[RMDB]
RNA sequence: GGGAACGACUCGAGUAGAGUCGAAAAGGACGAGCUGUCGCGUCCGAAUUAACGACAGCAACUAGCCUGUCACCAACCAGGCGAAUUAUGUUGGUGUAAUGAGGCGAAAGCCUCUAUCAGACUGGGACAUAGCAGUCGAAUUACCUAUGUCAUUAGAAUAAUUUAGUGAGUUCGCUCACUAAAUUAUAAAAGAAACAACAACAACAAC
Reactivity to 2A3 in 0.01 (KOAc 150mM, MgCl2 10mM, bicine 150mM(pH8.5), 24C), signal-to-noise 4, nucleotides 027 to 156: g000g000a000c000g010a000g000c000u000g000u010c000g010c000g010u020c000c020g020a010a070u190u100a080a020c020g000a000c010a000g010c000a010a010c030u020a030g000c000c000u010g040u060c000a000c000c000a000a000c000c000a010g030g000c040g010a030a090u230u130a070u140g010u010u010g010g000u010g000u010a070a110u130g000a000g000g010c000g050a060a030a000g000c000c000u000c000u000a060u100c020a000g000a010c010u010g010g020g000a000c000a000u000a000g010c000a000g010u020c090g010a060a020u170u090a110c010c000u000a000u000g000u010c000a000u040u180a010g020a040
Reactivity to DMS in 0.01 (KOAc 150mM, MgCl2 10mM, bicine 150mM(pH8.5), 24C), signal-to-noise 3, nucleotides 027 to 156: g000g020a020c010g010a110g020c030u010g000u030c010g050c010g020u000c070c030g010a140a060u000u000a070a120c010g010a030c010a010g010c000a110a070c090u010a190g000c000c000u000g010u010c000a160c050c040a030a060c050c030a060g010g020c040g010a060a070u000u000a080u000g040u010u000g030g000u010g000u000a090a100u010g000a040g000g040c000g010a160a110a300g020c010c000u000c000u000a050u000c040a160g010a080c050u010g010g010g010a040c000a020u000a010g030c030a300g010u000c030g010a120a110u000u010a090c140c010u000a010u010g010u000c010a200u000u010a140g000a160